RNA sequence: GGGAACGACUCGAGUAGAGUCGAAAAUUAAACAUGCAGAAAUAAGCAUGGUGGUCAAAAAGUAGAACGAAAGAUCAAAAAUUGAGAAAAUGAUCCAACGAACUACAAGACCGGAUCAAAUAAAAAACCUAAUGGAAGGUUUCGACCUUCCAUUAGGAAAAGAAACAACAACAACAAC
Reactivity to 2A3 in 0.01 (KOAc 150mM, MgCl2 10mM, bicine 150mM(pH8.5), 24C), signal-to-noise 1, nucleotides 027 to 126: u110u070a150a090a050c000a000u010g000c010a030g140a180a270a020u270a160a010g000c000a000u000g050g000u000g020g010u000c000a000a100a010a190a070g000u000a010g010a000a000c000g010a010a000a000g010a000u020c000a020a050a070a100a100u240u240g090a140g110a060a050a030a050u020g000a010u000c000c010a030a040c010g000a020a010c020u020a010c020a050a020g000a000c000c000g000g030a070u130c060a060a010a050u160a040a160a000a000a030a040
Reactivity to DMS in 0.01 (KOAc 150mM, MgCl2 10mM, bicine 150mM(pH8.5), 24C), signal-to-noise 1, nucleotides 027 to 126: u000u000a110a020a230c000a020u010g010c000a100g040a090a200a090u020a130a140g000c000a000u020g000g030u010g020g000u000c050a070a060a070a190a120g000u000a000g000a070a260c000g030a030a210a060g000a000u000c000a000a020a040a120a180u000u030g020a060g010a090a150a080a010u000g000a020u010c000c000a010a300c000g040a000a140c000u000a000c020a070a170g020a010c000c000g020g010a090u000c200a050a050a080u010a020a060a110a100a080a060